Notes
This 170-nucleotide RNA was probed chemically with DMS and 2A3. For DMS the reverse transcriptase was MarathonRT. Values cover nucleotides 27 to 129. For 2A3 the reverse transcriptase was SuperScript II with manganese.
[RMDB]
RNA sequence: GGGAACGACUCGAGUAGAGUCGAAAAGUUGCAGCUUCCGGAUCUUUGACACGUAAAGUGAAGUUACUAUUUAGGGCUUCAUUUUAUUUCAAAGAAUUUGCUACCCGCACUUUCACUGCUACCACUGGACCGCUUAGGUUCGCCUAAGCGAAAAGAAACAACAACAACAAC
Reactivity to DMS in 0.01 (KOAc 150mM, MgCl2 10mM, bicine 150mM(pH8.5), 24C), signal-to-noise 8, nucleotides 027 to 129: g030u000u000g010c000a000g020c000u000u000c060c010g060g020a060u000c010u010u010u010g030a000c300a090c260g020u020a000a010a000g000u030g020a000a000g020u010u000a160c030u020a190u070u080u090a000g000g010g020c000u000u000c000a030u020u010u010u000a000u000u010u000c000a010a010a020g030a050a090u030u040u040g000c040u020a040c120c010c000g040c000a030c000u000u000u000c030a030c000u020g010c050u010a100c010c000a090c080u050g030g010a130c140
Reactivity to 2A3 in 0.01 (KOAc 150mM, MgCl2 10mM, bicine 150mM(pH8.5), 24C), signal-to-noise 9, nucleotides 027 to 129: g050u050u050g010c010a010g010c010u050u020c040c020g070g030a070u020c010u010u010u010g040a050c050a010c220g030u010a000a000a010g000u000g010a000a000g010u040u050a300c030u090a180u200u260u300a060g010g000g000c000u000u000c000a000u000u000u000u000a010u000u070u010c000a000a010a000g030a040a090u090u070u100g020c020u060a050c000c000c010g020c000a000c000u010u030u020c010a000c010u020g010c020u050a050c010c020a060c080u060g040g050a070c050